[RMDB]
Structure probing data (2A3 and DMS) for a 170-nucleotide construct. Source: RMDB library 15KLIB, as collected in RNAgym. For DMS the reverse transcriptase was MarathonRT. For DMS, 65,002 sequencing reads were counted. Reactivities are given for positions 27 through 129. For 2A3 the reverse transcriptase was SuperScript II with manganese.
RNA sequence: GGGAACGACUCGAGUAGAGUCGAAAAAUAGGCUUAUCAAGAGAGGUGGAGGGACUGGCCCGAUGAAACCCGCCAGCCAGAAAUGGUGCCAAUUCCUGCAGCGGAAACGUUGAAAGAUGAGCCGAUGAAACGUAAGUCUUCGGACUUACGAAAAGAAACAACAACAACAAC
Reactivity to 2A3 in 0.01 (KOAc 150mM, MgCl2 10mM, bicine 150mM(pH8.5), 24C), signal-to-noise 9, nucleotides 027 to 129: a020u160a030g010g000c000u010u020a010u020c030a120a030g110a010g010a050g160g040u030g010g060a070g010g010g020a020c030u020g030g030c000c000c010g070a110u110g020a040a030a020c000c000c000g010c010c010a010g010c010c000a020g040a020a040a010u090g020g010u060g020c020c010a010a020u050u030c000c000u050g030c020a030g010c010g020g010a060a040a020c030g020u030u040g060a090a070a020g000a000u000g010a000g000c010c010g000a050u130g070a030a080a000
Reactivity to DMS in 0.01 (KOAc 150mM, MgCl2 10mM, bicine 150mM(pH8.5), 24C), signal-to-noise 8, nucleotides 027 to 129: a060u010a070g000g010c000u000u020a020u000c040a080a110g040a150g000a090g050g000u020g010g020a060g040g010g000a100c110u000g000g000c010c000c010g020a080u000g010a040a090a070c030c010c030g000c000c040a120g000c040c050a050g000a060a030a060u040g000g030u050g030c040c040a010a130u000u010c010c000u000g000c000a050g000c040g020g010a070a060a110c020g000u010u050g000a080a080a080g020a000u030g000a030g000c020c010g020a070u020g020a070a090a110